[RMDB]
Record summary: The record gives the reactivity of an RNA of 207 nucleotides to DMS and 2A3.

RNA sequence: GGGAACGACUCGAGUAGAGUCGAAAACUCAAUGUAGGGAAUAACAUUGAAUUGAUACAAAUACCUUUUUCGGUGUAGGGAAAAACACCGAAUUGAUACAAAUACCUUUCUCAAUGUAGGGAAUGACAAAACAGGCAUCGCUUCGGCGAUGCCUGAACUUGCAUUGAAAGUUCGCUUUCAAUGCAAGAAAAGAAACAACAACAACAAC
Reactivity to DMS in 0.01 (KOAc 150mM, MgCl2 10mM, bicine 150mM(pH8.5), 24C), signal-to-noise 1, nucleotides 027 to 156: c050u020c030a050a030u010g000u010a050g000g010g040a130a160u000a110a130c000a030u000u000g010a040a040u000u000g000a040u000a090c100a030a160a090u000a010c010c000u030u000u000u000u000c020g020g060u000g030u010a130g000g010g000a090a080a150a070a050c000a000c000c020g000a000a000u000u000g000a060u000a040c050a040a170a120u000a020c040c010u010u000u030c100u000c020a010a060u010g020u000a050g000g000g000a070a020u000g010a130c050a070a110a150a160c030a030g000g020c010a000u000c030g040c010u000u000c260g030g040c000g040a000u010g000c000c000u000g000a000a030
Reactivity to 2A3 in 0.01 (KOAc 150mM, MgCl2 10mM, bicine 150mM(pH8.5), 24C), signal-to-noise 2, nucleotides 027 to 156: c010u010c000a000a030u040g030u090a120g020g130g080a080a170u100a100a050c000a000u000u010g030a060a040u070u150g060a080u160a240c080a020a140a020u140a100c010c050u040u020u000u000u000c000g000g000u000g000u000a000g000g030g050a080a160a070a000a000c000a000c000c000g000a000a000u010u000g000a000u000a030c030a010a080a000u050a050c010c020u050u060u010c020u020c050a080a170u200g030u090a070g000g000g070a010a060u040g030a010c010a010a100a020a020c010a000g000g000c000a000u030c000g060c000u100u080c240g040g000c000g050a000u000g000c000c000u000g000a000a010
Record summary: The 2A3 profile rests on 1,276 reads. Source: RMDB library M2RFPK, as collected in RNAgym. 2A3 adducts were read by reverse transcription with SuperScript II with manganese.